The record gives the reactivity of an RNA of 170 nucleotides to 2A3 and DMS. In probing experiments dimethyl sulfate is read out at A N1 and C N3, which are open when not base-paired.

RNA sequence: GGGAACGACUCGAGUAGAGUCGAAAAGAGAGUUCGUUGUCAACGAUGUUGUCCUCGCAAUUCUCUCUGGAACCACAACUAAUGUUGACAAAAUACGCCAGCUUCUCAAAGGUGUCACCCUUGACAAUGAGUCCCAUGUUCGCAUGGGACAAAAGAAACAACAACAACAAC
Reactivity to 2A3 in 0.01 (KOAc 150mM, MgCl2 10mM, bicine 150mM(pH8.5), 24C), signal-to-noise 9, nucleotides 027 to 129: g030a000g000a000g000u040u110c020g010u060u040g010u020c000a000a000c050g140a120u250g000u030u010g010u020c020c030u010c020g030c070a040a110u190u010c030u010c000u000c020u040g010g020a030a020c020c010a020c040a090a020c030u170a080a110u210g010u020u030g020a000c000a010a050a020a000u140a030c030g000c010c010a000g000c010u030u030c010u000c000a040a040a010g020g000u040g030u040c010a110c000c020c020u050u130g040a040c040a080a140u110g010a040
Reactivity to DMS in 0.01 (KOAc 150mM, MgCl2 10mM, bicine 150mM(pH8.5), 24C), signal-to-noise 9, nucleotides 027 to 129: g010a010g040a050g040u030u010c030g020u040u000g030u040c040a030a020c050g060a230u060g050u030u030g020u010c030c050u020c090g000c160a050a140u040u030c040u000c030u000c000u000g000g030a180a160c080c080a130c110a090a080c090u020a070a110u030g020u010u000g000a070c070a050a060a080a120u050a070c100g000c000c000a070g000c110u030u020c050u000c050a060a110a000g030g020u030g020u050c040a090c040c020c040u020u030g000a020c050a060a100u050g030a240

The 2A3 profile rests on 20,154 reads.
Values cover nucleotides 27 to 129.
DMS adducts were read by reverse transcription with MarathonRT.
The RNA was probed in 150 mM KOAc, 10 mM MgCl2 and 150 mM bicine (pH 8.5) at 24 C.
The data come from the RNA Mapping Database (RMDB), library 15KLIB.